[RMDB]
RNA sequence: GGGAACGACUCGAGUAGAGUCGAAAAACGGUGUCAGUUUCCUACUCCCUUAAGGAGAAAGAAGUUAAGGUCGAUGGAAGGAUAUUUGCUAAGCUCACAAAGAAGCUUCGCAGCUGCCAAGUCAUGGCUACGCUGAACUAUUCGUAGUUCAGCGUAGAAAAGAAACAACAACAACAAC
Reactivity to DMS in 0.01 (KOAc 150mM, MgCl2 10mM, bicine 150mM(pH8.5), 24C), signal-to-noise 4, nucleotides 027 to 126: a110c070g020g030u000g000u000c050a040g020u020u000u000c010c020u000a280c050u000c020c000c050u010u010a110a190g010g010a070g000a100a080a120g020a100a080g010u000u000a060a060g010g010u000c070g020a080u010g010g000a060a100g000g000a080u010a050u000u000u000g020c040u000a030a040g010c010u010c040a150c170a100a140a170g010a100a050g000c000u000u000c140g020c000a080g010c080u000g000c030c000a070a110g010u000c120a020u010g000g000
Reactivity to 2A3 in 0.01 (KOAc 150mM, MgCl2 10mM, bicine 150mM(pH8.5), 24C), signal-to-noise 2, nucleotides 027 to 126: a000c050g020g010u060g040u060c030a100g000u000u000u030c010c000u000a070c010u000c020c010c000u020u130a090a050g050g010a050g020a040a060a050g060a070a010g030u050u050a110a010g040g020u030c070g040a050u100g050g020a030a060g060g030a030u030a100u070u130u040g000c000u020a010a000g000c010u030c040a050c070a050a260a040g140a110a000g030c000u000u020c010g020c020a000g020c000u020g000c000c010a040a010g060u060c020a100u110g080g000